[RMDB]
RNA sequence: GGGAACGACUCGAGUAGAGUCGAAAAAGAAGGCAGGAUCGCCAAGGGAACAUGCCUGGGUUCCCGAGGUUAAACCCUUACAGGCUCGCUGAUGACGGGUACGCCCCUCUUUCCCGUCGUUGGUCAGACUUAAACAGGGGCUAAGCAUGUAGCGGUUUCGUAUCAUAGAGUUCGCUCUAUGAUACGAAAAAGAAACAACAACAACAAC
Reactivity to 2A3 in 0.01 (KOAc 150mM, MgCl2 10mM, bicine 150mM(pH8.5), 24C), signal-to-noise 4, nucleotides 027 to 156: a010g100a010a010g080g020c070a030g060g060a050u050c040g000c000c000a000a010g000g000g010a000a000c010a030u080g000c000c000u000g000g000g000u000u000c000c000c000g000a010g000g010u040u130a070a040a040c040c020c000u020u110a140c020a000g000g000c010u010c000g000c010u000g000a010u020g000a000c000g000g020g000u060a040c100g010c000c010c010c010u030c040u070u180u060c010c000c000g000u000c010g000u000u000g020g010u000c010a010g020a140c050u130u270a030a020a010c050a030g010g000g020g020c000u000a030a010g000c020a070u200g100u210a020g040c040g040g000u000u020
Structure probing data (2A3) for a 207-nucleotide construct. 2A3 adducts were read by reverse transcription with SuperScript II with manganese. The data come from the RNA Mapping Database (RMDB), library RSTRND. For 2A3, 3,434 sequencing reads were counted.